[RMDB]
RNA sequence: GGGAACGACUCGAGUAGAGUCGAAAAUCAAGCCGCCUCGGAGGACGAAGGAGUGGCAGGGCCUCCAGGUCCGCUAUUCGACCACAUGCCUUUUGGAGAUGAUCAUGGCCGGGCCGGGGAAGCGAAGGUGAUAUUUAUGAUUCGUCAUAAAUAUCACAAAAGAAACAACAACAACAAC
Reactivity to DMS in 0.01 (KOAc 150mM, MgCl2 10mM, bicine 150mM(pH8.5), 24C), signal-to-noise 9, nucleotides 027 to 126: u030c070a090a110g010c030c250g000c020c010u000c030g010g010a120g010g010a120c060g010a090a070g000g000a050g020u000g010g010c030a090g030g000g000c020c000u020c140c170a170g010g020u000c010c020g000c070u000a040u010u010c070g000a100c020c020a060c060a090u040g010c020c000u000u010u010u010g010g010a070g000a090u020g000a100u010c060a090u010g010g020c040c030g020g000g010c010c010g000g000g000g000a080a060g010c040g010a120a090g010
Reactivity to 2A3 in 0.01 (KOAc 150mM, MgCl2 10mM, bicine 150mM(pH8.5), 24C), signal-to-noise 9, nucleotides 027 to 126: u090c010a020a030g030c000c000g030c010c000u020c020g040g020a070g060g060a040c040g040a070a040g060g020a050g020u100g060g000c080a100g070g040g000c010c010u080c090c030a030g000g010u010c010c000g000c020u060a070u060u110c070g050a090c020c020a030c010a070u220g050c020c000u100u180u100u220g090g020a120g020a070u150g020a030u080c040a060u080g030g020c060c020g030g030g000c010c000g000g000g010g020a040a010g040c050g060a080a020g120
An RNA of 177 nucleotides, treated with DMS and 2A3 and read out base by base. The reactions ran in a buffer of 150 mM KOAc, 10 mM MgCl2 and 150 mM bicine (pH 8.5), at 24 C.